Source information
Source: RMDB library RFM100, as collected in RNAgym. The record gives the reactivity of an RNA of 177 nucleotides to DMS and 2A3. For 2A3 the reverse transcriptase was SuperScript II with manganese. The reactions ran in a buffer of 150 mM KOAc, 10 mM MgCl2 and 150 mM bicine (pH 8.5), at 24 C. The DMS profile rests on 8,225 reads.
RNA sequence: GGGAACGACUCGAGUAGAGUCGAAAAUGAUCGCCAGGGUUGAUUCGGCUGAUCUGGCUGGCUAGGCGGGUGUCCCCUUCCUCCCUCACCGCUCCAUGUGCGUCCCUCCCGAAGCUGCGCGCUCGGUCAUACCGACUGAGUUCGCUCAGUCGGUAUGAAAAGAAACAACAACAACAAC
Reactivity to DMS in 0.01 (KOAc 150mM, MgCl2 10mM, bicine 150mM(pH8.5), 24C), signal-to-noise 2, nucleotides 027 to 126: u000g000a030u020c050g020c010c020a080g010g000g010u000u010g020a100u020u000c060g010g000c040u010g020a060u010c020u010g010g010c020u010g000g010c040u000a090g000g010c040g010g000g010u000g020u000c020c020c020c060u010u010c050c000u010c040c030c020u020c030a050c030c050g000c030u000c050c080a030u020g010u030g000c050g010u000c020c030c000u010c020c000c020g000a040a080g020c020u000g000c050g010c050g000c020u000c020g010g010u030
Reactivity to 2A3 in 0.01 (KOAc 150mM, MgCl2 10mM, bicine 150mM(pH8.5), 24C), signal-to-noise 6, nucleotides 027 to 126: u130g010a040u050c030g020c020c010a080g050g030g030u090u080g080a150u130u080c040g040g000c040u060g020a070u030c020u020g040g000c010u020g040g010c040u040a060g060g000c010g010g040g020u060g050u040c000c000c000c000u040u040c000c000u020c010c010c000u020c010a030c000c020g040c020u020c020c010a060u100g040u040g040c020g040u030c010c000c000u020c010c000c010g010a060a020g020c020u040g010c020g000c010g000c040u010c010g020g010u010